[RMDB]
RNA sequence: GGGAACGACUCGAGUAGAGUCGAAAAUUGGUGGUGUAGGGGUAAAAUCCGUAGAUAUCACCAAGAAUACCCAUUGCGAAGGCGAUCUGCUGGAACUCAACUGACGCUAAGGCGCGAAAGCGUGGGGCGUACUGCAUCUGUUCGCAGAUGCAGUACGAAAAGAAACAACAACAACAAC
Reactivity to DMS in 0.01 (KOAc 150mM, MgCl2 10mM, bicine 150mM(pH8.5), 24C), signal-to-noise 2, nucleotides 027 to 126: u000u000g000g090u000g020g000u000g010u000a090g010g010g000g030u000a030a040a300a150u010c000c010g000u010a120g010a000u000a010u000c000a020c010c000a000a020g000a190a220u000a110c010c040c010a220u010u010g000c030g010a180a180g020g010c000g020a030u000c070u010g020c040u010g000g000a070a100c090u030c100a110a060c140u010g000a030c020g000c020u020a100a150g000g000c000g050c020g000a090a050a150g000c020g010u010g000g030g000g020
Reactivity to 2A3 in 0.01 (KOAc 150mM, MgCl2 10mM, bicine 150mM(pH8.5), 24C), signal-to-noise 1, nucleotides 027 to 126: u000u010g000g010u010g000g010u000g030u010a050g000g020g020g000u020a020a030a010a020u010c040c000g020u150a020g040a050u030a010u020c000a010c030c000a010a000g030a010a050u120a080c010c000c000a060u020u220g080c080g080a090a050g030g000c010g090a300u020c040u120g000c030u050g000g080a060a070c030u020c110a030a030c020u070g020a020c000g030c030u070a070a070g030g010c000g000c010g090a080a040a000g010c000g020u010g000g000g020g000
Background:
The record gives the reactivity of an RNA of 177 nucleotides to DMS and 2A3. 2A3 adducts were read by reverse transcription with SuperScript II with manganese. The RNA was probed in 150 mM KOAc, 10 mM MgCl2 and 150 mM bicine (pH 8.5) at 24 C.